[RMDB]
Conditions: 150 mM KOAc, 10 mM MgCl2 and 150 mM bicine (pH 8.5), 24 C.
This 207-nucleotide RNA was probed chemically with 2A3.
RNA sequence: GGGAACGACUCGAGUAGAGUCGAAAAGGCGUCGGGAAGCCGGGGCUCUCGACGAUCGUCGCCGCCCUGAUCGAGGCCGACGAACCCCUGUCGAAAGCGGCGCUGGCCGACGCUGCCGGCGUCUCGAAACAGACGGUCAGGAACCACCGGGAGCGCCGCUCCAGUAUGUUUUCGAACAUACUGGAGCAAAAGAAACAACAACAACAAC
Reactivity to 2A3 in 0.01 (KOAc 150mM, MgCl2 10mM, bicine 150mM(pH8.5), 24C), signal-to-noise 1, nucleotides 027 to 156: g000g000c010g000u000c000g000g000g050a070a030g000c040c010g000g000g090g010c000u010c000u000c030g000a010c000g000a040u030c000g000u000c000g000c100c050g020c010c000c090u110g080a170u150c110g050a150g000g030c030c010g000a000c010g020a090a150c010c050c010c170u160g000u000c000g010a070a020a020g020c040g040g020c080g030c090u050g060g150c030c010g030a020c020g010c020u020g000c010c000g000g050c000g020u050c000u030c080g050a100a190a030c020a040g120a180c080g010g040u030c050a060g020g230a090a100c000c020a010c000c030g000g040g010a060g010c010g000c010c000